RNA sequence: GGGAACGACUCGAGUAGAGUCGAAAACGGGCUGGACUAUGUGCCGACGGACAAGAAAGUGCUGUUCGGUCACCAUUUUGCGGCCAUUGCCGGAGCAGGUCCGCUGGUGGGGCCGGUACUGGCGGCGUACAUCACCAAGGUUCGCCUUGGUGAUGUAAAAAGAAACAACAACAACAAC
Reactivity to 2A3 in 0.01 (KOAc 150mM, MgCl2 10mM, bicine 150mM(pH8.5), 24C), signal-to-noise 3, nucleotides 027 to 126: c040g000g020g000c030u070g020g050a040c030u040a040u160g040u050g050c000c000g010a010c010g030g010a020c060a080a140g190a300a170a020g210u280g150c020u030g040u170u040c010g000g020u100c040a070c100c020a020u060u090u100u120g040c000g020g010c000c010a070u040u140g000c010c010g010g000a040g010c030a030g040g050u050c010c030g030c070u070g050g090u170g010g010g000g000c020c000g010g000u040a040c030u020g030g000c020g030g000c020g050
Reactivity to DMS in 0.01 (KOAc 150mM, MgCl2 10mM, bicine 150mM(pH8.5), 24C), signal-to-noise 5, nucleotides 027 to 126: c100g010g000g010c020u010g000g000a070c040u010a050u010g020u010g000c010c010g010a060c040g020g010a040c060a100a110g000a070a100a160g010u010g010c020u000g000u000u000c020g000g010u010c020a080c090c080a040u000u000u000u000g000c020g000g000c010c020a110u000u000g020c020c080g000g010a270g010c070a080g000g010u010c020c020g010c040u000g010g010u000g010g000g010g010c040c000g000g020u000a030c060u000g000g020c010g010g010c110g020